The record gives the reactivity of an RNA of 177 nucleotides to DMS and 2A3. The reactions ran in a buffer of 150 mM KOAc, 10 mM MgCl2 and 150 mM bicine (pH 8.5), at 24 C. The 2A3 profile rests on 1,064 reads. The DMS profile rests on 2,046 reads. It was measured as part of the RMDB library OK1LIB.

RNA sequence: GGGAACGACUCGAGUAGAGUCGAAAAGGGAGGAAAGCGUGGCUUCUGUGCUACUGGCCCAUAGUUGGAGCCUACCACCCAUCUGAGAGUGGGCGCCAUUCCUCAAGGCUGUGUAGCUAAGGAGUGGUAUGUGGCACUCAUUCGUGAGUGCCACAUAAAAAGAAACAACAACAACAAC
Reactivity to DMS in 0.01 (KOAc 150mM, MgCl2 10mM, bicine 150mM(pH8.5), 24C), signal-to-noise 2, nucleotides 027 to 126: g020g060g000a080g000g000a110a000a150g000c170g000u040g020g020c000u030u000c070u020g010u000g000c020u020a040c000u020g000g040c020c000c010a160u030a080g010u000u040g000g000a020g030c000c000u000a030c020c000a150c100c000c030a060u040c180u040g010a060g070a230g020u000g000g000g000c020g010c000c020a080u010u020c020c030u000c200a200a220g000g010c000u040g000u010g030u040a020g020c020u010a170a070g000g020a000g010u000g000g000
Reactivity to 2A3 in 0.01 (KOAc 150mM, MgCl2 10mM, bicine 150mM(pH8.5), 24C), signal-to-noise 2, nucleotides 027 to 126: g000g000g000a090g000g030a090a050a020g160c130g040u090g010g000c000u000u020c010u020g100u040g000c020u010a000c020u020g000g000c020c000c050a050u130a030g020u040u040g000g000a000g030c000c010u040a030c000c030a220c000c020c010a160u140c120u150g150a110g020a000g140u010g000g010g000c000g000c010c000a030u140u160c060c000u040c090a010a010g010g000c000u000g000u050g040u300a000g000c000u010a050a030g000g000a000g000u040g000g030